[RMDB]
RNA sequence: GGGAACGACUCGAGUAGAGUCGAAAAGAAUUACCUGCCUCACAUCGCCACGGGCAUGUCCACUGGCAACUUAAUGAUUAACCAGCUGAAACCUACCACCAUGGGACACUGGUUUGCUUUGGUGAAAAUCAAAAAGCAGUUUUUGGUCUUCACCUUCCGAACUCACACUUUUCGAAGUGUGAGUUCGAAAAGAAACAACAACAACAAC
Reactivity to 2A3 in 0.01 (KOAc 150mM, MgCl2 10mM, bicine 150mM(pH8.5), 24C), signal-to-noise 1, nucleotides 027 to 156: g040a000a030u150u090a060c000c010u020g000c050c000u070c020a040c000a100u060c140g010c020c010a130c160g050g040g050c040a040u090g040u070c070c000a040c230u040g030g040c030a120a140c040u100u300a090a040u220g120a160u010u210a010a010c000c000a000g050c180u050g060a180a150a080c010c010u030a060c070c030a020c020c000a130u190g010g000g000a000c010a000c000u000g000g000u000u000u050g010c020u040u090u220g010g000u000g010a000a000a000a000u000c000a000a020a020a020a020g130c060a110g010u010u000u000u000u050g030g000u010c010u030u000c000a000c000c000u000u050c020